[RMDB]
RNA sequence: GGGAACGACUCGAGUAGAGUCGAAAAUAACAUUUCACCGGAGAGUUCAAGAAACGACGUCGUAGGAAACAAAAGAGUGAACGAUACUGAGAUGUUAUCGUUGGUGUGUAGCAAGAAGCAACGCAUCCAGCACUCUCAAUUUCGAUUGAGAGUGCUGAAAAGAAACAACAACAACAAC
Reactivity to 2A3 in 0.01 (KOAc 150mM, MgCl2 10mM, bicine 150mM(pH8.5), 24C), signal-to-noise 2, nucleotides 027 to 126: u010a030a020c010a010u060u070u030c010a040c040c050g000g060a100g000a010g000u030u010c020a020a050g050a130a090a010c060g050a060c080g090u140c040g070u120a060g000g110a120a040a050c040a030a060a040a020g090a010g070u080g030a040a010c010g000a040u060a140c010u030g010a000g000a020u020g030u020u000a050u060c030g050u030u080g010g010u000g000u000g000u030a070g000c030a090a090g100a160a000g210c000a010a080c040g000c000a000u000c000
Reactivity to DMS in 0.01 (KOAc 150mM, MgCl2 10mM, bicine 150mM(pH8.5), 24C), signal-to-noise 3, nucleotides 027 to 126: u000a020a080c010a100u000u000u000c000a010c140c090g000g020a100g010a300g000u010u010c050a050a110g010a060a180a050c070g000a070c160g020u010c070g020u010a090g020g010a130a080a050c120a020a050a090a110g000a100g000u000g000a030a020c010g000a100u000a050c060u000g000a060g020a050u000g000u000u000a020u000c070g010u000u010g010g010u000g000u000g030u000a030g040c030a110a140g010a130a140g000c030a070a000c040g010c070a030u010c040
Conditions: 150 mM KOAc, 10 mM MgCl2 and 150 mM bicine (pH 8.5), 24 C. The record gives the reactivity of an RNA of 177 nucleotides to 2A3 and DMS. Values cover nucleotides 27 to 126. The data come from the RNA Mapping Database (RMDB), library OK2TRN. DMS adducts were read by reverse transcription with MarathonRT. 2A3 adducts were read by reverse transcription with SuperScript II with manganese.